[RMDB]
RNA sequence: GGGAACGACUCGAGUAGAGUCGAAAAUGCAAGUAGUGCUAUUGUUGGAAUCGCCGUACCUAUUUAGGUUUACGCUCCAAGAUCGGUGGAUAGCAGCCCUAUCAAUAUCUAGGAGAACUGUGCUAUGAAAACGGUAUUGGCUUCGGCCAAUACCGAACUAUAACACCGACUUCGGUCGGUGUUAUAGAAAAGAAACAACAACAACAAC
Reactivity to DMS in 0.01 (KOAc 150mM, MgCl2 10mM, bicine 150mM(pH8.5), 24C), signal-to-noise 2, nucleotides 027 to 156: u000g000c060a070a200g030u000a060g000u000g080c010u000a040u000u000g020u000u000g040g020a040a080u000c070g000c020c050g020u010a060c040c060u010a130u000u000u000a040g020g000u000u000u000a060c050g010c030u000c000c000a070a140g000a030u000c070g020g020u020g030g010a080u010a040g010c020a220g000c120c110c000u000a130u000c050a090a110u000a040u000c030u000a130g020g000a050g000a050a110c040u000g030u000g000c020u000a090u000g010a040a050a080a140c050g020g020u000a020u000u000g030g030c010u000u010c300g060g000c000c000a020a030u000a000c000c010g020a000a010
Reactivity to 2A3 in 0.01 (KOAc 150mM, MgCl2 10mM, bicine 150mM(pH8.5), 24C), signal-to-noise 3, nucleotides 027 to 156: u080g000c060a100a030g060u080a010g040u070g040c000u010a030u060u030g040u060u080g040g050a060a140u100c010g000c020c000g020u050a060c000c020u130a180u190u200u250a060g000g000u050u090u040a060c050g000c010u030c010c010a030a050g010a030u110c080g070g030u060g100g020a010u030a030g060c030a000g000c020c000c000u030a040u110c040a050a020u010a030u240c040u070a030g000g030a040g040a050a020c080u120g020u040g100c020u110a050u250g130a030a080a020a010c020g000g000u000a030u000u000g010g000c020u000u040c130g140g000c000c000a000a000u000a000c000c000g000a000a010

This 207-nucleotide RNA was probed chemically with DMS and 2A3. Conditions: 150 mM KOAc, 10 mM MgCl2 and 150 mM bicine (pH 8.5), 24 C. It was measured as part of the RMDB library M2RFPK. For DMS the reverse transcriptase was MarathonRT.